[RMDB]
This 207-nucleotide RNA was probed chemically with DMS and 2A3.
The data come from the RNA Mapping Database (RMDB), library OK3TST.
Conditions: 150 mM KOAc, 10 mM MgCl2 and 150 mM bicine (pH 8.5), 24 C.
RNA sequence: GGGAACGACUCGAGUAGAGUCGAAAAACUUAUACCAAUGUUCCAAAAAGCUGGAGAUGCGCUUGCUAAUAUGAGUGGCGAUCAAGUGGCGGCUACUUUGUUUAUCAUUGCUGGUGCAAUUACUGGUGCUGUGGUUCCUGCUUUUGUAGCAAUGGCGUAAGGAAUGCCAAUUCGUUGGCAUUCCUUAAAAAGAAACAACAACAACAAC
Reactivity to DMS in 0.01 (KOAc 150mM, MgCl2 10mM, bicine 150mM(pH8.5), 24C), signal-to-noise 1, nucleotides 027 to 156: a080c020u000u000a110u000a300c010c020a030a150u010g020u000u000c010c000a030a110a040a120a150g000c050u000g020g010a070g030a120u000g000c030g070c070u000u000g030c070u000a040a100u000a080u000g000a070g020u010g000g020c030g030a110u000c060a050a160g070u010g020g030c040g030g020c040u000a030c050u000u000u000g020u030u000u000a090u000c080a100u000u000g000c040u000g010g000u000g000c020a070a020u000u000a130c040u010g020g000u000g040c010u020g010u000g000g000u000u000c010c000u000g030c000u010u000u000u000g020u000a080g000c000a070a060u020g030g040c040g020
Reactivity to 2A3 in 0.01 (KOAc 150mM, MgCl2 10mM, bicine 150mM(pH8.5), 24C), signal-to-noise 2, nucleotides 027 to 156: a000c030u140u060a090u050a070c010c010a010a130u110g030u060u000c010c000a020a040a020a040a000g000c050u070g020g010a080g000a110u100g040c070g000c040u020u140g000c060u080a090a150u130a130u300g070a060g020u030g040g010c020g040a070u090c040a060a090g030u030g140g010c000g040g000c000u030a010c010u120u030u070g050u070u160u130a110u080c030a020u050u060g000c050u060g040g030u080g000c000a000a050u090u040a050c060u050g000g030u070g000c030u040g010u050g000g100u060u000c000c020u010g000c000u020u030u030u090g040u030a030g020c030a040a120u050g030g010c020g010

2A3 is a SHAPE reagent: it acylates the 2'-hydroxyl of flexible nucleotides of all four kinds. The 2A3 profile rests on 767 reads.